Source information: An RNA of 177 nucleotides, treated with 2A3 and DMS and read out base by base. The 2A3 profile rests on 4,713 reads. The DMS profile rests on 6,553 reads. The RNA was probed in 150 mM KOAc, 10 mM MgCl2 and 150 mM bicine (pH 8.5) at 24 C.
RNA sequence: GGGAACGACUCGAGUAGAGUCGAAAAUACUUCUGGGAUUAUGUCACAAUCUCUGGAUGUGACGGGAGCUCCUUUUAAGUCUUUAGUUAUGCAUCAGUAAUACAAGGUUCUAUGGGCUUCAGUGGAAGCAUUAAUCCAGUUUCGACUGGAUUAAUGCAAAAGAAACAACAACAACAAC
Reactivity to 2A3 in 0.01 (KOAc 150mM, MgCl2 10mM, bicine 150mM(pH8.5), 24C), signal-to-noise 6, nucleotides 027 to 126: u110a010c040u040u070c020u050g010g010g050a080u080u110a110u300g110u070c050a040c030a070a170u010c050u000c060u120g100g010a020u010g050u040g040a000c000g010g000g010a020g010c010u130c000c000u070u090u050u170a050a010g030u000c000u030u060u070a060g030u080u100a040u110g050c050a080u020c040a090g020u100a030a080u080a140c070a080a030g010g010u040u000c020u030a050u090g030g010g000c000u000u010c020a040g010u060g080g060a120a020
Reactivity to DMS in 0.01 (KOAc 150mM, MgCl2 10mM, bicine 150mM(pH8.5), 24C), signal-to-noise 4, nucleotides 027 to 126: u040a070c030u000u000c020u030g010g000g000a060u050u000a070u030g010u030c120a030c070a030a040u010c020u000c140u060g020g010a050u010g000u000g030a060c040g000g020g000a030g000c050u000c020c030u010u030u010u030a030a080g030u020c030u000u000u010a200g020u040u010a030u000g000c070a100u030c080a110g030u020a040a060u030a120c160a060a050g010g000u010u010c050u000a050u010g000g020g020c000u020u000c050a130g020u000g000g000a100a070